[RMDB]
RNA sequence: GGGAACGACUCGAGUAGAGUCGAAAAGAUCAGUGGAUUGGUCAAUGCUGCGCUGGUGUGGGCCGCAGCGCGAUGGACCACAUCGUCGCGGGUGGCCGCGCUGCCCCUGUGGGCGUGGCUACUGACGUCGUGAACUACGCUUCGGCGUAGUUCACGAAAAAGAAACAACAACAACAAC
Reactivity to DMS in 0.01 (KOAc 150mM, MgCl2 10mM, bicine 150mM(pH8.5), 24C), signal-to-noise 2, nucleotides 027 to 126: g000a090u010c040a040g030u000g010g010a160u010u020g030g010u000c020a050a090u020g020c000u000g000c010g000c030u000g000g030u000g010u010g000g020g030c170c170g000c030a050g010c070g010c070g000a120u010g010g000a180c030c020a050c030a030u000c010g010u010c170g030c070g000g030g020u000g010g010c010c000g040c030g000c000u010g020c020c000c020c020u000g030u010g020g010g010c000g040u000g010g010c000u000a040c090u000g000a020c110g040
Reactivity to 2A3 in 0.01 (KOAc 150mM, MgCl2 10mM, bicine 150mM(pH8.5), 24C), signal-to-noise 1, nucleotides 027 to 126: g040a100u090c010a030g090u120g090g070a180u070u130g080g000u010c060a010a060u160g000c010u000g000c020g000c010u080g000g160u090g030u110g080g000g030c040c080g000c030a010g050c010g020c050g070a080u130g000g070a090c040c040a040c030a050u130c020g110u030c050g010c020g040g050g000u020g020g030c000c000g000c010g020c010u090g000c000c000c010c000u090g070u200g080g010g000c000g000u010g040g000c000u000a020c040u030g000a010c050g050
Structure probing data (DMS and 2A3) for a 177-nucleotide construct. For DMS, 1,851 sequencing reads were counted. DMS adducts were read by reverse transcription with MarathonRT. The data come from the RNA Mapping Database (RMDB), library OK2TRN. Conditions: 150 mM KOAc, 10 mM MgCl2 and 150 mM bicine (pH 8.5), 24 C. For 2A3, 1,434 sequencing reads were counted.